[RMDB]
An RNA of 177 nucleotides, treated with 2A3 and read out base by base.
For 2A3 the reverse transcriptase was SuperScript II with manganese.
Source: RMDB library RFM100, as collected in RNAgym.
The reactions ran in a buffer of 150 mM KOAc, 10 mM MgCl2 and 150 mM bicine (pH 8.5), at 24 C.
RNA sequence: GGGAACGACUCGAGUAGAGUCGAAAACAAUUGGGUGUAGCUACUUUAAUCGAUCAUUCAUUCAGUCGCUUCCCGGGAAACCAAAGCUUUUGGGCUCCGGGGGAAGAAUGGUUGCAAAGCUGAAACUGCAUGUUCGGAAUUUCGAUUCCGAACAUGCAAAAGAAACAACAACAACAAC
Reactivity to 2A3 in 0.01 (KOAc 150mM, MgCl2 10mM, bicine 150mM(pH8.5), 24C), signal-to-noise 1, nucleotides 027 to 126: c070a000a110u120u300g100g000g000u070g040u050a010g030c000u030a000c050u130u110u090a130a030u170c000g020a000u000c020a080u050u000c010a010u000u000c070a070g060u180c080g040c080u120u140c000c000c000g000g000g000a190a110a020c010c000a040a000a000g300c040u000u030u030u020g000g000g000c010u000c000c000g030g000g000g020g000a000a000g000a000a040u030g010g000u060u000g030c050a130a000a000g000c050u000g000a070a000a100c020u000
Reactivities are given for positions 27 through 126.